[RMDB]
RNA sequence: GGGAACGACUCGAGUAGAGUCGAAAACUGGUUCUAACACCGAGUUUGCCUCUAAUUCCUCGGUGUUGUCACUUGUUAACUUCACCGUUGAUCCUCAAAAAGCUUAUCUCGAUUUCGUCAAUGCGGGCCACCAUAUACUUCGGUAUAUGGAAAAGAAACAACAACAACAAC
Reactivity to DMS in 0.01 (KOAc 150mM, MgCl2 10mM, bicine 150mM(pH8.5), 24C), signal-to-noise 9, nucleotides 027 to 129: c040u020g020g010u010u040c050u030a040a020c070a000c030c000g000a000g030u020u020u020g040c090c030u040c110u050a090a150u020u010c080c010u020c020g010g010u000g020u000u010g000u000c090a080c090u040u050g030u000u000a070a090c070u020u000c040a060c010c010g030u000u000g020a030u010c040c020u000c030a030a080a080a080a070g000c050u000u000a110u020c050u020c040g030a070u010u000u000c040g040u020c030a020a050u040g030c040g040g000g000c040c060a140
Reactivity to 2A3 in 0.01 (KOAc 150mM, MgCl2 10mM, bicine 150mM(pH8.5), 24C), signal-to-noise 9, nucleotides 027 to 129: c010u020g020g010u050u030c050u100a020a010c010a010c020c000g000a010g010u030u110u140g090c030c010u110c040u100a160a180u160u120c020c010u010c000g000g000u010g000u000u000g010u010c030a010c050u050u050g030u060u060a090a050c020u050u040c040a040c090c010g020u010u060g020a040u030c000c010u030c010a050a060a020a030a010g040c050u090u070a090u170c030u010c020g120a110u040u130u040c030g030u030c040a060a050u100g030c030g010g010g010c010c010a020
Structure probing data (DMS and 2A3) for a 170-nucleotide construct. For DMS, 114,043 sequencing reads were counted. For DMS the reverse transcriptase was MarathonRT. Reactivities are rounded to 0.1 and cut off at 0 and 3. High DMS reactivity at an A or C suggests that its Watson-Crick edge is free. For 2A3 the reverse transcriptase was SuperScript II with manganese. Values cover nucleotides 27 to 129.